[RMDB]
RNA sequence: GGGAACGACUCGAGUAGAGUCGAAAAGAUAUGGAAUGUGCUAAUACCCGAUAUACUACCCACCUAUGCGUAGCUCGGAAACGAGCUGAUCAUAGAGGUAUAUCGGGGAUAACACAUUCCUAAGUCAGUACGGUAAUUGGUUCGCCAAUUACCGUACAAAAGAAACAACAACAACAAC
Reactivity to DMS in 0.01 (KOAc 150mM, MgCl2 10mM, bicine 150mM(pH8.5), 24C), signal-to-noise 2, nucleotides 027 to 126: g000a090u020a300u020g010g000a010a000u000g000u000g000c040u000a230a130u030a200c000c000c000g010a030u000a020u000a000c010u010a090c140c090c210a300c130c000u000a000u010g020c260g010u000a080g000c010u000c000g040g000a100a030a150c000g010a010g000c000u000g000a040u000c000a000u000a000g000a110g010g000u020a040u000a010u010c000g000g000g000g000a010u000a110a030c000a000c000a020u000u000c000c000u000a030a060g000u000c030a100
Reactivity to 2A3 in 0.01 (KOAc 150mM, MgCl2 10mM, bicine 150mM(pH8.5), 24C), signal-to-noise 1, nucleotides 027 to 126: g020a030u120a060u110g020g010a000a010u010g030u000g000c040u070a080a050u140a300c000c000c000g010a000u000a000u000a010c040u160a130c060c050c030a070c060c000u020a010u020g040c070g290u300a000g000c000u010c000g000g000a100a060a080c000g000a000g000c000u010g040a010u040c010a000u020a020g090a060g060g000u020a010u000a000u000c000g040g000g000g000a000u010a010a010c010a000c000a010u000u010c000c010u000a060a000g000u000c040a020
Structure probing data (DMS and 2A3) for a 177-nucleotide construct.
Reactivities are given for positions 27 through 126.
The RNA was probed in 150 mM KOAc, 10 mM MgCl2 and 150 mM bicine (pH 8.5) at 24 C.
2A3 adducts were read by reverse transcription with SuperScript II with manganese.